Source: RMDB library OK2TRN, as collected in RNAgym. Chemical mapping of a 177-nucleotide RNA with 2A3 and DMS. For 2A3, 5,386 sequencing reads were counted. Reactivities are given for positions 27 through 126.

RNA sequence: GGGAACGACUCGAGUAGAGUCGAAAACCGGCCGGCACUGCGGUGGAAUACGGUGACCACACCAACAUCCCGCUGACCAGCUGGAACGCCAACUUCGAGCGCCGCACCAUCGUUCGUGGUGAGCUGGUAUUCAUAACUGCUUCGGCAGUUAUGAAUAAAAAGAAACAACAACAACAAC
Reactivity to 2A3 in 0.01 (KOAc 150mM, MgCl2 10mM, bicine 150mM(pH8.5), 24C), signal-to-noise 4, nucleotides 027 to 126: c000c000g020g010c030c030g040g050c020a020c090u070g000c000g000g050u070g040g110a050a050u140a090c060g000g020u030g030a210c070c040a170c030a010c060c020a060a050c010a080u060c000c000c010g010c010u040g080a130c020c020a000g020c020u030g040g030a050a060c040g030c040c010a040a050c070u130u110c040g060a060g000c020g010c020c040g040c000a010c000c010a030u060c040g090u110u050c060g000u050g050g200u030g020a050g020c020u030g030g000
Reactivity to DMS in 0.01 (KOAc 150mM, MgCl2 10mM, bicine 150mM(pH8.5), 24C), signal-to-noise 5, nucleotides 027 to 126: c010c000g010g010c030c030g000g000c040a060c070u000g010c040g020g010u010g020g010a110a080u010a050c160g000g020u000g010a130c140c210a090c070a070c040c040a100a160c140a120u000c020c010c030g020c050u000g010a160c070c050a040g000c010u020g000g000a040a120c070g000c030c050a100a070c090u000u010c040g010a080g000c030g010c050c030g000c170a070c020c010a040u010c040g010u000u000c160g010u000g000g000u000g000a070g020c010u000g000g010

The RNA was probed in 150 mM KOAc, 10 mM MgCl2 and 150 mM bicine (pH 8.5) at 24 C. For 2A3 the reverse transcriptase was SuperScript II with manganese.